[RMDB]
RNA sequence: GGGAACGACUCGAGUAGAGUCGAAAAGAUAUGGACAACCUGGAGCGUAUCGCAACGAAGAACAGCUAGGAUCGGAAACGAUCCUAGCUGGGAGUUGAUGAUACGCGAUGAAAGGUUGUCCUAAGUCCUAAUUGAAUGUGUUCGCACAUUCAAUUAGAAAAGAAACAACAACAACAAC
Reactivity to DMS in 0.01 (KOAc 150mM, MgCl2 10mM, bicine 150mM(pH8.5), 24C), signal-to-noise 6, nucleotides 027 to 126: g000a100u010a280u010g000g010a010c000a010a000c000c000u000g000g000a110g020c010g030u000a000u000c000g020c000a010a000c000g020a200a190g010a160a210c000a000g010c010u000a010g000g010a010u000c000g000g000a150a110a250c010g010a010u000c000c000u000a000g010c000u010g000g000g010a170g010u000u000g000a070u010g010a010u000a000c000g020c000g000a040u010g000a090a180a020g000g010u000u000g010u000c000c000u000a020a080g000u000c030
Reactivity to 2A3 in 0.01 (KOAc 150mM, MgCl2 10mM, bicine 150mM(pH8.5), 24C), signal-to-noise 3, nucleotides 027 to 126: g020a020u130a060u240g000g000a000c000a000a000c010c010u030g010g010a060g000c000g000u000a000u010c000g000c030a000a000c020g220a300a240g060a250a050c000a000g020c010u010a000g000g000a010u000c010g020g040a080a070a060c010g000a010u000c000c010u000a000g000c000u000g010g000g000a030g010u000u040g040a300u080g000a000u020a020c000g000c020g010a020u020g000a020a010a000g020g000u000u000g000u010c000c000u000a000a000g000u000c000